[RMDB]
RNA sequence: GGGAACGACUCGAGUAGAGUCGAAAAACAGAACAAGAAAGGGAAAGAUGGAUCAAUACUUCCACCUCAGUUGGCUUUGUUUGCAAUAGCUACUCCACUGCAGCCACCAUCCAUACUUGAAAUCCGACGUAAGGCGAAGGUUCGCCUUCGCCUUACGAAAAGAAACAACAACAACAAC
Reactivity to 2A3 in 0.01 (KOAc 150mM, MgCl2 10mM, bicine 150mM(pH8.5), 24C), signal-to-noise 1, nucleotides 027 to 126: a000c010a000g100a060a030c020a030a030g200a140a070a020g060g000g020a050a120a000g030a020u030g020g020a020u060c070a090a000u070a210c020u030u000c010c000a110c000c010u070c040a080g000u050u090g110g020c080u000u090u070g030u100u120u070g040c040a030a060u060a130g020c020u040a030c020u000c040c030a050c030u010g020c010a030g000c000c010a050c020c010a040u050c010c000a030u080a110c030u010u000g050a110a090a040u010c020c000g160a050
Reactivity to DMS in 0.01 (KOAc 150mM, MgCl2 10mM, bicine 150mM(pH8.5), 24C), signal-to-noise 1, nucleotides 027 to 126: a050c060a100g000a100a030c060a000a100g040a100a130a140g000g010g000a070a090a030g030a090u000g000g000a050u000c020a100a100u000a090c090u000u000c010c000a110c010c020u000c050a030g010u000u000g000g040c120u000u000u000g000u000u010u000g010c020a040a030u000a040g000c020u000a100c110u000c020c050a030c100u000g000c050a050g040c040c030a030c040c010a040u000c010c060a020u000a070c050u000u010g010a040a040a090u000c010c060g030a190

Source information
Structure probing data (2A3 and DMS) for a 177-nucleotide construct. The RNA was probed in 150 mM KOAc, 10 mM MgCl2 and 150 mM bicine (pH 8.5) at 24 C. High 2A3 reactivity points to a flexible backbone, as in loops and unpaired stretches. The data come from the RNA Mapping Database (RMDB), library OK2TST. Reactivities are given for positions 27 through 126.